[RMDB]
RNA sequence: GGGAACGACUCGAGUAGAGUCGAAAAAGAUAAUGGCUUCCUGCCCAAUAUCUGGCAGCUCAUAAAAACAGGUCAUAGGUAGUUGGACUUCAUAGCCAACACCGUUAGUUUCCAGCAGCACCAAGGGCUCCAUUACGUUGUUCGCAACGUAAUGGAGAAAAGAAACAACAACAACAAC
Reactivity to 2A3 in 0.01 (KOAc 150mM, MgCl2 10mM, bicine 150mM(pH8.5), 24C), signal-to-noise 2, nucleotides 027 to 126: a020g070a020u110a060a070u100g040g000c050u090u030c010c040u060g040c000c000c030a130a090u110a020u050c030u060g030g070c020a020g040c010u010c110a070u180a030a080a000a000a020c060a050g010g080u130c030a050u060a120g060g000u060a090g010u140u020g000g020a050c000u110u110c180a140u250a130g000c010c000a000a020c000a000c000c030g000u030u050a030g000u010u060u040c020c000a000g000c050a000g040c000a030c010c030a070a070g000g000g060
Reactivity to DMS in 0.01 (KOAc 150mM, MgCl2 10mM, bicine 150mM(pH8.5), 24C), signal-to-noise 2, nucleotides 027 to 126: a100g010a090u010a060a090u010g020g020c090u010u000c050c070u020g010c100c000c050a050a090u010a050u010c060u020g020g000c120a090g020c050u000c040a080u040a040a040a080a080a070c070a050g040g010u000c240a100u000a110g000g050u000a160g010u000u000g010g000a100c040u000u000c300a030u020a190g020c000c000a000a000c020a030c000c000g010u010u000a050g010u000u000u000c000c040a070g020c050a020g000c020a110c040c050a030a070g010g010g020
Overview
Chemical mapping of a 177-nucleotide RNA with 2A3 and DMS. DMS adducts were read by reverse transcription with MarathonRT. The 2A3 profile rests on 1,205 reads.